RNA sequence: GGGAACGACUCGAGUAGAGUCGAAAAUUAAAGCGCGAAAAAGAUCGAUCGAUCGUUUGAACGCGCAAGUCGAAGUUUGAUACGGGCAUACUAGCUAGCUAGCUAGCAAAACAAACUUCGUUAAAAAGUAUUCACCUAGUUUCGACUAGGUGAAUACAAAAGAAACAACAACAACAAC
Reactivity to 2A3 in 0.01 (KOAc 150mM, MgCl2 10mM, bicine 150mM(pH8.5), 24C), signal-to-noise 3, nucleotides 027 to 126: u110u060a090a070a030g000c010g000c010g060a050a020a000a000a060g020a010u040c040g060a120u170c170g000a020u010c040g100u010u070u090g030a110a010c000g000c010g030c000a000a010g030u010c000g000a010a000g000u010u020u030g100a100u120a170c050g060g060g030c080a050u080a160c040u000a010g000c000u020a030g130c030u070a000g000c000u040a000g040c040a040a020a060a020c000a020a000a010c000u000u000c000g010u010u030a050a120a010a000a030
Reactivity to DMS in 0.01 (KOAc 150mM, MgCl2 10mM, bicine 150mM(pH8.5), 24C), signal-to-noise 4, nucleotides 027 to 126: u010u020a040a130a150g010c000g020c000g010a060a080a010a050a030g000a010u000c000g010a130u030c190g000a000u010c000g010u000u000u000g010a160a110c020g010c000g010c010a060a040g000u000c000g010a010a020g000u000u000u000g010a080u010a110c220g010g010g040c150a180u000a110c010u000a010g000c000u000a160g020c190u010a080g010c000u000a020g000c030a040a060a070a100c010a000a010a010c000u000u000c000g010u000u000a050a070a060a050a060

An RNA of 177 nucleotides, treated with 2A3 and DMS and read out base by base. As a SHAPE reagent, 2A3 marks flexible, mostly unpaired nucleotides at the ribose 2'-OH. DMS adducts were read by reverse transcription with MarathonRT.